[RMDB]
RNA sequence: GGGAACGACUCGAGUAGAGUCGAAAAGAUAUGGAUAGCAGCGAGUGCGUCGCAAUGCGUUUGACGAAUCUCGGAAACGAGAUUCCGAGCAUUGAACUACGACAGCACUCGCUGCUAUCCUAAGUCACAUGUGAAGGUUGUUCGCAACCUUCACAUGAAAAGAAACAACAACAACAAC
Reactivity to DMS in 0.01 (KOAc 150mM, MgCl2 10mM, bicine 150mM(pH8.5), 24C), signal-to-noise 3, nucleotides 027 to 126: g070a030u020a300u000g000g010a000u010a000g000c000a020g020c000g030a070g020u010g010c030g020u000c020g040c020a010a000u000g000c000g030u010u010u030g050a280c300g000a010a010u000c000u000c010g020g010a130a180a280c000g030a000g000a020u000u000c000c000g020a110g000c020a010u000u010g010a120a090c250u020a300c000g000a000c000a080g050c000a000c000u000c020g000c000u000g010c000u000a000u000c000c000u000a010a060g010u000c020a270